The record gives the reactivity of an RNA of 177 nucleotides to 2A3 and DMS. 2A3 adducts were read by reverse transcription with SuperScript II with manganese. The 2A3 profile rests on 6,465 reads. The reactions ran in a buffer of 150 mM KOAc, 10 mM MgCl2 and 150 mM bicine (pH 8.5), at 24 C. Reactivities are rounded to 0.1 and cut off at 0 and 3.

[RMDB]
RNA sequence: GGGAACGACUCGAGUAGAGUCGAAAAGAUAUGGAAGUGUACGUGCCGAGCGUUUGACGCUGACAGAUAUGUCGGAAACGACAUAUCUGUCAGCCGAGCUCGGAACUACACGGACACUUCCUAAGUCCGCAUAUACAGAGUUCGCUCUGUAUAUGCGAAAAGAAACAACAACAACAAC
Reactivity to 2A3 in 0.01 (KOAc 150mM, MgCl2 10mM, bicine 150mM(pH8.5), 24C), signal-to-noise 2, nucleotides 027 to 126: g020a050u120a080u300g000g010a000a000g000u000g030u010a020c010g000u000g040c010c000g000a020g020c070g130u220u300u300g040a030c070g000c020u010g000a000c010a000g030a010u000a010u030g000u010c030g080g080a190a090a070c030g000a000c010a010u010a000u000c010u000g000u010c000a000g000c000c000g000a000g000c000u010c010g000g000a010a000c020u060a020c010a000c000g000g010a000c000a000c020u000u000c000c000u010a100a010g040u010c070
Reactivity to DMS in 0.01 (KOAc 150mM, MgCl2 10mM, bicine 150mM(pH8.5), 24C), signal-to-noise 3, nucleotides 027 to 126: g010a090u000a300u010g000g000a020a020g020u000g010u010a000c010g020u000g030c000c000g010a020g020c000g030u000u010u010g020a090c300g000c000u000g020a010c000a010g000a010u000a010u000g020u000c000g010g000a110a080a240c000g000a010c000a010u000a000u000c020u000g000u000c000a000g030c000c010g000a050g010c000u000c000g000g010a010a000c070u020a300c010a010c010g000g000a020c000a000c000u000u000c000c000u000a030a080g010u000c040